[RMDB]
Annotation
This 177-nucleotide RNA was probed chemically with 2A3 and DMS. The reactions ran in a buffer of 150 mM KOAc, 10 mM MgCl2 and 150 mM bicine (pH 8.5), at 24 C. The 2A3 profile rests on 1,154 reads. The DMS profile rests on 1,877 reads.
RNA sequence: GGGAACGACUCGAGUAGAGUCGAAAAGGGCGGCGCGGCGCGGAGCCGAGCAGGACGGCCGCCAUCUUGCGCGCAGCUGGAGUCGGUGCCUGAGGUUGCAGCCGAGAGUGUGCGCCAGCCCGCGGCCCAGGCGUACGAACUUCGGUUCGUACGCCUGAAAAGAAACAACAACAACAAC
Reactivity to 2A3 in 0.01 (KOAc 150mM, MgCl2 10mM, bicine 150mM(pH8.5), 24C), signal-to-noise 2, nucleotides 027 to 126: g040g000g020c020g020g020c020g020c020g080g000c050g030c110g050g010a030g000c000c000g040a030g070c070a010g100g000a000c030g040g030c020c000g040c000c000a070u010c000u000u080g010c040g000c020g010c100a100g080c040u080g030g040a020g110u070c040g000g080u030g020c000c010u140g060a130g060g130u080u110g030c010a050g070c000c020g010a010g000a010g000u060g000u050g000c000g030c000c000a010g000c010c010c000g000c010g000g080c010c000
Reactivity to DMS in 0.01 (KOAc 150mM, MgCl2 10mM, bicine 150mM(pH8.5), 24C), signal-to-noise 1, nucleotides 027 to 126: g010g000g000c000g000g000c000g000c010g040g000c000g030c180g040g040a190g020c040c010g050a140g020c060a060g000g010a090c080g010g000c000c010g010c010c000a050u000c000u000u030g000c010g000c060g030c090a090g000c020u000g000g000a140g020u010c040g010g020u020g010c020c000u000g020a280g010g020u010u010g010c040a090g020c000c000g000a140g010a080g000u040g000u040g020c000g000c010c010a040g000c010c000c050g000c120g000g060c000c020